[RMDB]
Background:
The record gives the reactivity of an RNA of 207 nucleotides to DMS and 2A3. For 2A3 the reverse transcriptase was SuperScript II with manganese. For DMS, 2,982 sequencing reads were counted. The reactions ran in a buffer of 150 mM KOAc, 10 mM MgCl2 and 150 mM bicine (pH 8.5), at 24 C.

RNA sequence: GGGAACGACUCGAGUAGAGUCGAAAAAUGGUAGUUAGUCUACUCGCAAUCCUAGUUACUUUGGAGUAAUCUAAAGUGUGUGUAAACGGGCGAAAGUCUGUAAAAUACUGGGGACAUAGGGUCAACAAGAACUAGUAGACCUUCGGGUCUACUAGAACAGAGUUUGUAGUUUCGACUACAAACUCUGAAAAGAAACAACAACAACAAC
Reactivity to DMS in 0.01 (KOAc 150mM, MgCl2 10mM, bicine 150mM(pH8.5), 24C), signal-to-noise 2, nucleotides 027 to 156: a040u000g000g000u000a050g020u000u020a100g020u000c010u010a020c010u000c080g010c080a080a130u000c020c010u010a050g020u010u010a020c010u000u010u000g020g000a070g010u020a170a190u000c000u000a040a040a030g000u000g000u000g010u000g020u020a080a120a100c020g010g010g030c050g010a170a130a130g000u000c010u020g010u020a040a070a030a070u000a040c010u010g010g020g000g010a060c040a100u000a060g010g020g010u000c050a040a080c090a040a160g000a070a110c010u000a020g010u010a010g010a040c010c000u000u000c300g010g010g000u000c000u000a020c000u000a010g040a030a150
Reactivity to 2A3 in 0.01 (KOAc 150mM, MgCl2 10mM, bicine 150mM(pH8.5), 24C), signal-to-noise 2, nucleotides 027 to 156: a000u080g020g000u000a040g010u140u020a040g040u040c030u040a010c020u010c010g000c030a020a090u080c000c020u020a030g030u060u060a020c000u000u020u030g030g010a060g030u110a130a120u000c000u010a000a000a020g010u000g010u010g000u000g030u070a060a150a100c040g020g000g010c020g060a090a010a010g000u000c020u000g020u030a020a050a010a020u100a060c040u030g000g010g000g030a010c020a050u120a060g080g000g000u040c010a010a030c020a130a090g070a080a030c000u010a000g000u000a000g000a000c000c000u030u030c170g050g000g000u000c000u010a010c000u000a000g000a000a000